This 177-nucleotide RNA was probed chemically with DMS and 2A3. It was measured as part of the RMDB libraries RFM100 and RFMREP. Values cover nucleotides 27 to 126.
RNA sequence: GGGAACGACUCGAGUAGAGUCGAAAAUUGGGCAGUAUAAAAAUAAUGACCUGUUGCAAAUAACGGAUUAUCCUCGAAAUCGAGCCGUAUGGUCAGACAGACAACUUUAGGGUUAUAUAGAUAGUGCAGAUUACCCUGUUUUCGAACAGGGUAAUCUAAAAGAAACAACAACAACAAC
Reactivity to DMS in 0.01 (KOAc 150mM, MgCl2 10mM, bicine 150mM(pH8.5), 24C), signal-to-noise 3, nucleotides 027 to 126: u040u010g000g000g010c050a040g010u000a090u020a050a040a040a040a090u010a070a120u010g010a030c070c010u000g000u020u010g000c100a040a090a080u010a060a090c060g010g010a130u020u020a100u030c230c010u000c030g020a090a110a100u010c020g000a010g030c000c030g000u010a020u010g010g010u020c060a050g020a060c100a030g000a070c110a060a060c070u010u010u000a060g010g000g010u000u000a060u010a040u000a100g000a080u010a060g000u000g020c100
Reactivity to 2A3 in 0.01 (KOAc 150mM, MgCl2 10mM, bicine 150mM(pH8.5), 24C), signal-to-noise 3, nucleotides 027 to 126: u060u040g010g010g010c030a020g120u080a030u120a110a130a020a030a010u220a050a150u060g080a050c010c000u030g050u030u060g030c020a060a080a030u090a130a070c010g000g000a010u060u080a030u180c010c020u000c000g060a130a080a130u110c010g000a030g040c000c010g040u030a070u050g050g000u030c000a000g000a060c020a020g090a030c010a050a020c090u070u110u170a070g060g000g000u050u000a040u010a010u020a150g070a060u040a010g090u040g040c000